Source: RMDB library OK2TRN, as collected in RNAgym.
This 177-nucleotide RNA was probed chemically with DMS and 2A3.
For DMS the reverse transcriptase was MarathonRT.
RNA sequence: GGGAACGACUCGAGUAGAGUCGAAAACGCCAGAGUUGCUGACAGCGAUGGUAAUGCCACCGGAUGCAAUUGCCUCGGCAAUGACCUUAUCGACCUGAUUAGCGAACUCAUCGCUAAGCGCGUCAAGCAUACCGACCAGUUUCGACUGGUCGGUAUGAAAAGAAACAACAACAACAAC
Reactivity to DMS in 0.01 (KOAc 150mM, MgCl2 10mM, bicine 150mM(pH8.5), 24C), signal-to-noise 5, nucleotides 027 to 126: c230g020c020c020a090g010a080g040u000u000g010c010u000g000a220c140a090g000c040g030a080u000g000g010u000a070a110u000g020c030c020a050c050c030g000g010a150u010g000c050a140a070u010u010g000c090c040u000c150g010g010c030a040a070u000g000a090c040c030u010u010a050u020c040g010a070c120c020u010g010a110u000u000a010g040c010g000a030a140c200u010c170a070u010c030g000c030u000a020a020g000c040g020c250g000u010c040a100a130g000
Reactivity to 2A3 in 0.01 (KOAc 150mM, MgCl2 10mM, bicine 150mM(pH8.5), 24C), signal-to-noise 5, nucleotides 027 to 126: c050g010c020c010a010g000a000g040u050u080g040c030u050g040a050c050a040g040c070g070a110u020g000g030u090a160a080u240g070c030c020a040c050c000g020g030a060u080g030c030a060a110u130u170g030c010c020u050c060g010g000c000a010a070u120g060a030c020c000u070u150a160u140c070g020a060c010c030u040g030a190u020u020a000g000c020g010a080a070c040u050c250a180u060c080g020c040u040a040a020g030c030g010c030g030u020c030a020a010g070

The 2A3 profile rests on 6,487 reads. For 2A3 the reverse transcriptase was SuperScript II with manganese. The RNA was probed in 150 mM KOAc, 10 mM MgCl2 and 150 mM bicine (pH 8.5) at 24 C.